[RMDB]
RNA sequence: GGGAACGACUCGAGUAGAGUCGAAAAGAAGGGCGUGCGCUCCUGGACGCUGCUCACCACCUCGGACGUCACCUGCGGCGUGGAGCAAGUCUACUGGUCGCUGCCCGACAUGAUGCAAGACCCGGUCACCUUCCGCUCCACGCGUCAAGUUAGCAACCACUUCCCCAUAGUUCGCUAUGGGGAAGUGAAAAGAAACAACAACAACAAC
Reactivity to 2A3 in 0.01 (KOAc 150mM, MgCl2 10mM, bicine 150mM(pH8.5), 24C), signal-to-noise 2, nucleotides 027 to 156: g100a020a080g040g020g000c080g070u140g010c050g000c030u060c090c040u020g000g010a070c040g000c060u040g020c010u030c070a050c020c010a070c020c020u070c010g040g020a040c010g020u050c030a150c100c020u060g040c030g090g000c010g030u100g020g000a000g010c000a000a000g010u040c040u060a050c010u060g030g010u030c060g000c200u060g020c000c010c000g010a030c020a070u160g030a070u160g020c060a090a000g000a020c000c050c100g010g020u040c050a020c010c000u100u120c090c040g000c000u020c000c000a030c050g000c000g030u030c030a030a090g030u050u100a020g010c030a000a040c040
Reactivity to DMS in 0.01 (KOAc 150mM, MgCl2 10mM, bicine 150mM(pH8.5), 24C), signal-to-noise 1, nucleotides 027 to 156: g000a120a090g010g000g040c030g060u000g060c010g020c040u020c000c020u010g030g050a070c040g010c050u000g000c030u000c000a120c020c050a060c000c010u000c050g010g020a140c050g000u000c060a170c030c040u000g080c140g030g010c020g000u000g050g020a110g060c040a020a020g000u000c040u000a100c060u000g000g030u000c000g020c030u000g040c020c060c050g000a090c120a140u000g000a110u000g030c070a100a060g000a070c020c030c000g020g000u020c160a090c040c030u040u000c050c080g000c040u000c000c040a030c030g000c040g010u010c010a080a150g000u000u020a120g040c050a110a060c060